[RMDB]
RNA sequence: GGGAACGACUCGAGUAGAGUCGAAAAGUAAGGUCGUCUUCUAAGAGAAUAGCUUGUUCUGUAAGGACUAGAGGGAAAUAGGCUGUUAGAUUUUCGGAAUCUACUUUAAUCGUUACAGGACCUUCUCGGCUAGGGACGUGUUCGCACGUCCCUAGCCAAAAGAAACAACAACAACAAC
Reactivity to 2A3 in 0.01 (KOAc 150mM, MgCl2 10mM, bicine 150mM(pH8.5), 24C), signal-to-noise 1, nucleotides 027 to 126: g110u090a040a040g010g020u100c050g040u080c030u110u100c130u080a070a020g000a000g000a180a000u080a110g000c020u000u190g000u100u000c000u000g150u040a060a190g010g010a010c000u000a000g000a060g070g190g000a000a080a000u300a290g040g020c030u030g040u060u000a000g040a040u020u060u000u060c000g000g150a200a200u000c000u000a280c000u000u110u060a030a030u000c090g230u000u000a130c010a000g140g000a000c050c020u060u000c000u000c000

Chemical mapping of a 177-nucleotide RNA with 2A3. The data come from the RNA Mapping Database (RMDB), library OK1LIB. Reactivities are given for positions 27 through 126. Conditions: 150 mM KOAc, 10 mM MgCl2 and 150 mM bicine (pH 8.5), 24 C. For 2A3 the reverse transcriptase was SuperScript II with manganese.